The record gives the reactivity of an RNA of 177 nucleotides to DMS. The RNA was probed in 150 mM KOAc, 10 mM MgCl2 and 150 mM bicine (pH 8.5) at 24 C.
RNA sequence: GGGAACGACUCGAGUAGAGUCGAAAAGAUAUGGAUACUUUUUCCUGGCAUGUUGGACAUGCGAUUGGAUUCGGAAACGAAUCCAAAUCGCAACAGCCAAUCAUGCCAGGAAAAAGUAUCCUAAGUCCACUUAGGUAGACUUCGGUCUACCUAAGUGAAAAGAAACAACAACAACAAC
Reactivity to DMS in 0.01 (KOAc 150mM, MgCl2 10mM, bicine 150mM(pH8.5), 24C), signal-to-noise 2, nucleotides 027 to 126: g000a110u000a300u000g000g030a010u010a000c020u000u000u000u000u000c000c000u000g000g000c000a000u000g020u000u000g010g010a070c100a220u000g000c000g020a000u010u000g000g000a000u000u000c000g000g010a150a080a280c000g000a010a000u000c000c010a010a020a060u000c000g010c000a010a070c300a190g010c010c000a000a020u000c010a010u000g000c000c000a000g000g000a000a000a000a000a020g020u000a000u000c000c000u000a010a060g000u000c050

Values cover nucleotides 27 to 126.